Structure probing data (DMS and 2A3) for a 207-nucleotide construct.
The 2A3 profile rests on 4,993 reads.
As a SHAPE reagent, 2A3 marks flexible, mostly unpaired nucleotides at the ribose 2'-OH.
The reactions ran in a buffer of 150 mM KOAc, 10 mM MgCl2 and 150 mM bicine (pH 8.5), at 24 C.
For DMS, 10,664 sequencing reads were counted.
Reactivities are given for positions 27 through 156.
[RMDB]
RNA sequence: GGGAACGACUCGAGUAGAGUCGAAAAGAGCUCUAGAUGCGAUUGAAGACUGUUUCAGCAUCUGCUAUCAGUCUGAGAUAGCUCAGGAUAGCUGGAGCUAUCUGCAACGGUGCAGACUCCAGUGACACCGUGAACAAUCGUUCAUGUCACAGAGCAGAUUAAUCCCGCUAUUCGUAGCGGGAUUAAUAAAAGAAACAACAACAACAAC
Reactivity to DMS in 0.01 (KOAc 150mM, MgCl2 10mM, bicine 150mM(pH8.5), 24C), signal-to-noise 4, nucleotides 027 to 156: g010a150g000c010u000c020u000a100g020a090u010g010c010g010a080u010u000g010a200a080g010a040c020u010g030u000u010u010c100a100g010c030a300u000c120u010g020c040u000a050u000c020a050g030u000c090u000g000a200g000a050u000a020g010c010u000c030a090g030g010a120u000a250g020c030u010g000g000a030g000c050u000a040u000c010u010g010c010a080a130c140g020g060u000g030c020a080g010a150c030u000c020c060a090g020u000g000a110c060a050c040c030g020u000g000a030a160c010a090a080u000c110g010u000u000c030a050u000g020u010c050a090c080a030g010a030g030c010a130g000
Reactivity to 2A3 in 0.01 (KOAc 150mM, MgCl2 10mM, bicine 150mM(pH8.5), 24C), signal-to-noise 6, nucleotides 027 to 156: g050a010g000c000u000c000u020a060g010a070u060g010c010g010a020u000u050g040a070a020g020a020c020u010g080u100u090u170c100a020g000c030a160u140c160u210g000c010u010a020u100c000a020g070u010c010u030g020a020g000a060u050a010g000c010u010c030a020g010g060a110u050a080g040c020u030g020g010a010g000c040u050a060u010c000u010g020c020a090a090c130g180g050u070g000c010a000g010a110c010u040c040c020a020g010u010g050a020c010a010c020c020g030u020g030a020a010c010a010a030u040c040g040u100u110c080a060u130g060u060c030a050c020a130g020a000g000c010a010g000